[RMDB]
RNA sequence: GGGAACGACUCGAGUAGAGUCGAAAAGACACUCAGUUCGCUGAGUGUCAAAUAAAAUCAGCGGUUAAUAACGAGGCGUUAUAACCGCUGAACGCCUCGUUAAAAGAACCAAGUUCGCUUGGUUCAACAUACUGCAAUACUUCGGUAUUGCAGUAUGAAAAGAAACAACAACAACAAC
Reactivity to 2A3 in 0.01 (KOAc 150mM, MgCl2 10mM, bicine 150mM(pH8.5), 24C), signal-to-noise 7, nucleotides 027 to 126: g000a000c000a000c010u000c000a010g030u070u070c120g030c120u010g010a000g000u000g000u010c000a000a000a000u010a000a010a000a060u040c010a010g010c010g030g020u090u090a200a040u030a170a080c050g050a090g300g080c100g020u000u020a030u020a060a020c010c000g000c010u000g000a000a000c000g030c000c000u060c050g060u030u140a050a050a030a080g000a000a000c000c000a000a000g010u020u060c150g010c120u010u000g000g000u000u000c000a000a000
Reactivity to DMS in 0.01 (KOAc 150mM, MgCl2 10mM, bicine 150mM(pH8.5), 24C), signal-to-noise 6, nucleotides 027 to 126: g000a020c000a000c000u010c000a000g010u010u010c260g020c000u000g010a020g010u000g000u000c000a010a070a050u000a060a070a120a080u000c020a010g010c020g010g010u000u010a070a060u000a010a010c010g010a150g030g010c070g020u000u000a020u000a050a040c010c020g000c020u000g000a010a010c080g000c010c010u000c140g020u010u010a050a070a130a100g000a010a000c000c000a010a010g010u000u010c220g010c010u000u000g000g000u000u000c010a060a140
Overview:
The data come from the RNA Mapping Database (RMDB), library M2PK50. Chemical mapping of a 177-nucleotide RNA with 2A3 and DMS. DMS (dimethyl sulfate) methylates the pairing face of unpaired adenines and cytosines. High 2A3 reactivity points to a flexible backbone, as in loops and unpaired stretches. The reactions ran in a buffer of 150 mM KOAc, 10 mM MgCl2 and 150 mM bicine (pH 8.5), at 24 C.